[RMDB]
RNA sequence: GGGAACGACUCGAGUAGAGUCGAAAAAGUGCACUAGUGCAAAGCAAGAUAUUGGCUUUUCCACUUCAGAUGAAACAGAAUACGUACAUGUAUUCAGAUGUGUACACAUAAGCAAUAUAUGUUUAUAAAUGCCCAGCAUAUUCGUAUGCUGGGCAUUAAAAGAAACAACAACAACAAC
Reactivity to DMS in 0.01 (KOAc 150mM, MgCl2 10mM, bicine 150mM(pH8.5), 24C), signal-to-noise 2, nucleotides 027 to 126: a120g080u000g010c010a040c050u010a040g030u020g000c300a050a030a060g020c020a000a150g050a190u020a170u030u010g000g060c000u000u010u020u000c270c000a040c090u010u030c110a030g030a070u040g000a080a090a080c110a090g000a030a020u000a010c020g000u030a080c270a040u050g000u010a010u000u000c000a190g020a110u040g000u000g000u000a030c020a000c180a010u000a070a000g000c100a050a010u030a050u050a020u030g000u000u000u000a010u010a080
Reactivity to 2A3 in 0.01 (KOAc 150mM, MgCl2 10mM, bicine 150mM(pH8.5), 24C), signal-to-noise 3, nucleotides 027 to 126: a000g010u010g030c020a010c010u040a020g040u000g080c120a100a000a000g010c000a060a000g050a180u100a150u180u270g010g010c000u090u000u040u080c080c020a040c040u110u130c100a080g000a170u070g020a190a140a010c050a100g030a020a050u080a030c010g060u110a090c030a210u300g020u020a010u040u050c020a010g020a210u100g010u080g020u040a010c040a000c000a120u080a080a010g000c000a090a000u020a000u050a020u080g050u000u040u000a130u010a050
An RNA of 177 nucleotides, treated with DMS and 2A3 and read out base by base. DMS adducts were read by reverse transcription with MarathonRT. 2A3 adducts were read by reverse transcription with SuperScript II with manganese. The 2A3 profile rests on 971 reads. The reactions ran in a buffer of 150 mM KOAc, 10 mM MgCl2 and 150 mM bicine (pH 8.5), at 24 C.